[RMDB]
An RNA of 207 nucleotides, treated with 2A3 and read out base by base. Reactivities are given for positions 27 through 156. High 2A3 reactivity points to a flexible backbone, as in loops and unpaired stretches. The data come from the RNA Mapping Database (RMDB), library M2RFPK. 2A3 adducts were read by reverse transcription with SuperScript II with manganese.
RNA sequence: GGGAACGACUCGAGUAGAGUCGAAAAGCGCAAAUCCACAAACGCCAACGAUGAGCGUUUCGCUGUAGCCGCUUAAGUCAACAGCCGGGGCCGCCUGAGCCCUGUUACCAAAGACGGCUGGCGGGGGUAAUUACUUAUUGCUUCGGCAAUAAGUAAACAGAAGGCCAAGAUUCGUCUUGGCCUUCUGAAAAGAAACAACAACAACAAC
Reactivity to 2A3 in 0.01 (KOAc 150mM, MgCl2 10mM, bicine 150mM(pH8.5), 24C), signal-to-noise 1, nucleotides 027 to 156: g030c040g000c060a220a090a000u040c050c000a090c050a090a100a010c040g030c010c010a100a070c180g220a200u190g020a040g010c000g010u010u080u030c030g000c080u040g110u080a000g050c010c010g000c090u140u060a060a070g030u000c040a010a030c000a140g010c000c020g010g010g090g010c040c000g040c010c050u060g040a040g000c000c020c000u020g010u040u070a040c000c000a030a030a030g010a060c000g010g000c010u070g010g010c030g000g020g000g000g020u010a070a120u010u000a000c000u000u000a000u000u000g000c010u000u110c240g010g000c010a000a000u000a000a000g000u000a010a010a010